[RMDB]
RNA sequence: GGGAACGACUCGAGUAGAGUCGAAAACUUUUCAACUUCGGUUGAAAAGAACCUGCGCGCUGCUCGCAGUUAAGUGUAACUCCUCCUCUGAGUCAUCGGGCGUUAUAUAAUCAUUCGUGAUUAUAAAUGCAAGUUUUAUAUUCGUAUAAAACUUGCAAAAAGAAACAACAACAACAAC
Reactivity to DMS in 0.01 (KOAc 150mM, MgCl2 10mM, bicine 150mM(pH8.5), 24C), signal-to-noise 2, nucleotides 027 to 126: c000u000u010u000u000c000a010a000c010u000u010c150g050g020u010u010g000a000a000a020a010g000a100a140c140c080u010g020c050g020c060g000c050u000g000c060u010c020g020c040a050g010u000u000a070a080g010u000g010u010a080a120c090u000c040c010u000c170c000u000c010u000g010a110g000u010c070a090u000c040g010g000g010c120g000u000u010a050u000a010u000a000a000u000c010a040u000u010c170g030u000g010a000u000u000a000u000a010a060a170
This 177-nucleotide RNA was probed chemically with DMS. Values are in units of 0.01, from 0 to 300, in steps of 10. For DMS, 1,262 sequencing reads were counted. DMS adducts were read by reverse transcription with MarathonRT. Reactivities are given for positions 27 through 126.